[RMDB]
RNA sequence: GGGAACGACUCGAGUAGAGUCGAAAACACUAUAUGUGAAGAGAUGGGCUAGGUUUGGGGAAAUGUAAGAAAGUGAGUAAGGCCUGGGCCCCACUAUAUGUGCUCAUAACCUGGUAAAAAGAUGAAAAAUACCAAAGAUACAAGGCAGUGGAUAAGAUGGUAGGUACGUAUUCGUACGUACCUACCAAAAAGAAACAACAACAACAAC
Reactivity to DMS in 0.01 (KOAc 150mM, MgCl2 10mM, bicine 150mM(pH8.5), 24C), signal-to-noise 1, nucleotides 027 to 156: c050a050c050u000a020u050a160u000g000u000g020a150a110g010a050g050a070u000g010g020g020c020u000a060g000g030u010u010u000g060g020g020g030a070a040a090u030g000u010a120a180g010a030a100a100g050u010g010a090g050u000a080a060g010g000c020c050u020g000g020g040c040c000c010c020a060c080u000a130u000a150u000g070u000g000c000u010c000a070u000a080a080c060c000u000g000g030u010a070a060a090a070a030g000a090u000g020a060a060a090a070a180u000a160c040c030a050a080a080g000a120u010a040c040a040a050g000g050c120a100g000u000g070g000a150u000a070a070g050a300
Reactivity to 2A3 in 0.01 (KOAc 150mM, MgCl2 10mM, bicine 150mM(pH8.5), 24C), signal-to-noise 1, nucleotides 027 to 156: c040a010c040u130a060u120a060u180g160u030g060a110a090g010a060g000a130u170g000g000g020c020u040a030g020g080u100u050u110g070g020g000g040a000a210a000u160g010u100a150a110g010a210a000a000g060u030g020a140g030u050a120a040g030g000c010c000u040g020g030g000c000c000c000c000a000c020u020a020u010a040u230g030u050g050c000u000c000a030u030a040a110c030c000u000g030g000u110a120a120a000a030a030g070a030u150g060a020a080a060a000a000u110a110c030c030a030a030a030g080a000u160a050c030a010a010g090g000c000a000g030u000g000g010a060u180a010a080g000a070